[RMDB]
This 177-nucleotide RNA was probed chemically with DMS and 2A3. The reactions ran in a buffer of 150 mM KOAc, 10 mM MgCl2 and 150 mM bicine (pH 8.5), at 24 C. The data come from the RNA Mapping Database (RMDB), library TTRDEL.
RNA sequence: GGGAACGACUCGAGUAGAGUCGAAAAGAUAUGGACAAGAGCUUUGAUCAUGGUGUCGGAAACGACACCCAUGGGAGCUUGUCCUAAGUCAAACGUUCUCAAGGCAGUUCGCUGCCUUGAGAACGAAGUUAUGGUUUGAGUUCGCUCAAACCAUAACAAAAGAAACAACAACAACAAC
Reactivity to DMS in 0.01 (KOAc 150mM, MgCl2 10mM, bicine 150mM(pH8.5), 24C), signal-to-noise 4, nucleotides 027 to 126: g000a050u000a300u010g000g010a010c020a040a060g000a100g020c030u000u000u000g010a120u000c020a020u000g000g020u000g000u000c010g020g000a100a080a180c010g010a000c000a020c130c040c040a000u000g000g000g000a030g010c000u000u000g000u000c000c000u000a020a100g000u000c030a060a100a280c010g000u000u000c000u000c000a010a010g000g000c010a000g010u000u010c250g020c000u000g010c000c000u000u000g010a010g000a010a010c000g000a010a040
Reactivity to 2A3 in 0.01 (KOAc 150mM, MgCl2 10mM, bicine 150mM(pH8.5), 24C), signal-to-noise 4, nucleotides 027 to 126: g010a030u070a040u110g000g010a010c020a050a080g060a060g270c060u260u250u220g130a130u300c010a000u020g000g000u010g000u000c010g000g020a050a080a040c010g000a000c000a010c030c010c000a000u010g010g020g010a020g010c000u000u010g000u000c010c000u030a120a010g040u000c040a080a030a120c020g000u000u000c000u000c000a000a000g000g000c010a000g010u070u160c240g080c150u000g000c000c000u010u000g000a000g010a000a010c000g010a000a000